RNA sequence: GGGAACGACUCGAGUAGAGUCGAAAACUCUGAUUGUUCGCAAUCAGAGAAAUCGUGGUAGUGCUGAUAUUGGCUCAGGCCAUACUGGCAUUACUGGUGACAAAAGGGCUCCCUUCGGGGAGCCCAACUCAUGUUUAUACUUCGGUAUAAACAUGAGAAAAGAAACAACAACAACAAC
Reactivity to DMS in 0.01 (KOAc 150mM, MgCl2 10mM, bicine 150mM(pH8.5), 24C), signal-to-noise 3, nucleotides 027 to 126: c000u000c000u000g000a020u010u000g010u010u030c200g030c010a000a000u000c000a000g010a010g000a040a060a050u000c030g010u000g010g010u000a000g020u000g010c000u010g010a030u000a010u000u010g030g010c000u000c270a190g030g000c000c000a040u000a010c020u010g000g000c000a010u000u000a010c000u000g010g010u000g010a130c150a050a050a130a160g020g000g020c010u000c000c000c010u000u010c160g040g010g000g010a010g020c010c000c000a000a010
Reactivity to 2A3 in 0.01 (KOAc 150mM, MgCl2 10mM, bicine 150mM(pH8.5), 24C), signal-to-noise 2, nucleotides 027 to 126: c000u010c000u000g000a000u000u020g030u030u070c170g010c070a000a000u000c000a000g000a000g030a050a060a000u090c070g030u090g010g020u000a000g010u010g010c000u010g010a050u020a070u120u140g000g020c030u040c180a160g220g010c000c000a000u010a010c020u050g000g000c000a000u000u000a010c010u010g070g040u080g060a060c060a030a080a060a120g020g000g000c020u000c020c020c000u000u020c190g030g020g010g010a000g000c010c010c000a000a000
Chemical mapping of a 177-nucleotide RNA with DMS and 2A3.
For 2A3 the reverse transcriptase was SuperScript II with manganese.
The data come from the RNA Mapping Database (RMDB), library M2PK50.
Reactivities are given for positions 27 through 126.